RNA sequence: GGGAACGACUCGAGUAGAGUCGAAAAGAUAUGGACCACGGUGUAAACGCGAAGAACUAGGUCGGAAACGACCUAGGGAGCGUGCAUUGGUCCUAAGUCAAAACACUUAAGGUUCGCCUUAAGUGAAGACUGAUUCGAAGUUCGCUUCGAAUCAGUCAAAAGAAACAACAACAACAAC
Reactivity to DMS in 0.01 (KOAc 150mM, MgCl2 10mM, bicine 150mM(pH8.5), 24C), signal-to-noise 1, nucleotides 027 to 126: g000a010u010a040u040g020g000a150c000c000a200c300g000g000u000g000u010a080a160a100c000g000c000g000a150a190g000a060a220c010u000a000g020g010u000c020g030g000a040a000a020c000g020a000c000c000u000a000g040g000g030a010g010c010g000u000g000c050a040u060u000g000g000u010c090c000u010a010a130g000u010c030a110a090a160a280c000a000c000u000u000a010a000g000g030u000u030c300g020c000c020u010u010a000a010g010u000g000a090a060
Reactivity to 2A3 in 0.01 (KOAc 150mM, MgCl2 10mM, bicine 150mM(pH8.5), 24C), signal-to-noise 2, nucleotides 027 to 126: g000a000u020a000u050g000g020a020c000c040a040c110g110g000u140g050u170a300a300a090c040g000c020g300a300a000g010a000a010c000u010a000g000g050u010c000g000g000a010a010a000c030g000a020c140c000u000a000g030g000g020a000g020c010g020u010g000c080a050u000u190g000g000u010c000c000u000a010a000g000u020c000a090a130a010a000c000a010c000u000u000a000a000g020g030u070u190c300g280c010c000u030u030a000a000g000u010g040a050a030